[RMDB]
RNA sequence: GGGAACGACUCGAGUAGAGUCGAAAAAGCCAAGUCCUAAGGACGUAUAAUGUCUAUGGAUGCAGUUCAACGACUAGAUGGCAGUGGGUGUUGUUAAGACUUAGGUUUUUACAAUGCUUAAGGUAUAGUCUAUUCUCUAUCGAAAGAUAGCGUAUGGGAAUAGUAUGAUCUUCGGAUCAUACUAUUCAAAAGAAACAACAACAACAAC
Reactivity to 2A3 in 0.01 (KOAc 150mM, MgCl2 10mM, bicine 150mM(pH8.5), 24C), signal-to-noise 6, nucleotides 027 to 156: a010g070c010c010a050a020g030u000c010c000u010a010a010g010g010a000c020g090u110a110u120a300a190u300g010u000c010u010a010u040g000g000a030u060g050c070a030g020u100u150c060a110a030c080g020a010c010u020a020g030a170u110g120g030c020a030g030u070g030g010g020u020g000u000u010g010u000u050a020a000g000a010c010u030u070a120g050g090u040u010u000u010u020a020c010a020a020u010g010c000u020u020a030a030g040g010u060a020u030a080g010u000c010u010a060u070u030c010u000c000u000a000u000c000g000a030a000a000g000a000u000a000g020c030g040u050a100u150g190g030
Reactivity to DMS in 0.01 (KOAc 150mM, MgCl2 10mM, bicine 150mM(pH8.5), 24C), signal-to-noise 4, nucleotides 027 to 156: a090g000c010c020a100a300g000u000c010c010u010a030a180g020g010a020c010g040u000a130u000a140a090u010g030u000c010u000a220u010g010g020a030u000g030c140a090g020u010u000c050a110a160c080g000a080c030u000a100g020a160u010g000g020c040a110g010u000g000g020g000u000g010u000u000g000u000u000a030a090g010a010c010u000u010a160g040g020u000u000u010u010u000a060c080a040a050u000g010c010u000u000a040a050g020g020u000a100u000a090g010u000c040u010a150u000u000c020u000c020u000a000u000c010g020a050a040a100g000a020u000a020g020c030g010u000a070u010g030g020